[RMDB]
RNA sequence: GGGAACGACUCGAGUAGAGUCGAAAAGAUAUGGAUUCAGGGAGCGAUGGGUCGGAAACGACCCAAUCGCGCGAAACCUGAAUCCUAAGUCAAAACUGGCGUAGCAUCUUCGGAUGCUACGCCAGAACGAUUUAAGAAGGUUCGCCUUCUUAAAUCGAAAAGAAACAACAACAACAAC
Reactivity to DMS in 0.01 (KOAc 150mM, MgCl2 10mM, bicine 150mM(pH8.5), 24C), signal-to-noise 3, nucleotides 027 to 126: g010a050u000a300u010g000g000a020u000u000c000a000g010g000g010a130g020c000g010a020u010g000g020g010u000c000g020g000a050a060a220c010g010a020c000c000c010a000a000u000c010g030c010g010c220g000a050a120a180c000c010u000g000a000a000u000c000c000u000a020a060g010u000c020a080a060a140a140c000u000g000g000c010g010u000a010g000c000a010u000c010u010u020c170g020g010a010u000g000c010u000a000c000g000c000c010a000g000a010a090
Reactivity to 2A3 in 0.01 (KOAc 150mM, MgCl2 10mM, bicine 150mM(pH8.5), 24C), signal-to-noise 2, nucleotides 027 to 126: g030a000u070a020u140g010g000a000u010u010c000a000g000g000g040a150g030c030g030a000u010g010g020g050u020c040g020g020a110a110a050c020g000a000c040c080c030a020a210u010c020g000c020g000c030g120a080a050a030c000c000u000g000a000a000u010c000c000u010a030a020g030u000c020a000a010a120a200c020u010g000g020c010g000u010a010g020c010a000u000c000u090u150c290g020g000a010u000g000c000u010a010c030g000c000c000a000g000a000a000
Conditions: 150 mM KOAc, 10 mM MgCl2 and 150 mM bicine (pH 8.5), 24 C. Structure probing data (DMS and 2A3) for a 177-nucleotide construct. The 2A3 profile rests on 4,596 reads. It was measured as part of the RMDB library TTRDEL.